The record gives the reactivity of an RNA of 177 nucleotides to DMS.
[RMDB]
RNA sequence: GGGAACGACUCGAGUAGAGUCGAAAAGAUAUGGAAACGAGGGAGCUCGAGGAAACACAUCGGAAACGAUGUGGUCCCCCGAGCGAAGAACUCGUUUCCUAAGUCAAAAGCCGGCUUCGGCCGGCAAUCUAAUACGCAACUUCGGUUGCGUAUUAGAAAAAGAAACAACAACAACAAC
Reactivity to DMS in 0.01 (KOAc 150mM, MgCl2 10mM, bicine 150mM(pH8.5), 24C), signal-to-noise 1, nucleotides 027 to 126: g000a050u010a300u000g040g000a000a000a000c010g030a040g000g050g000a100g000c000u000c000g000a010g000g000a050a050a040c000a010c000a010u000c000g020g000a170a070a200c010g050a000u000g000u010g000g000u010c090c000c030c040c000g000a000g010c010g030a060a110g000a040a280c000u000c000g010u000u000u000c000c000u000a010a110g000u010c010a080a250a260a170g000c000c000g040g000c000u000u000c240g050g040c000c000g000g010c000a050a000

Description:
The RNA was probed in 150 mM KOAc, 10 mM MgCl2 and 150 mM bicine (pH 8.5) at 24 C.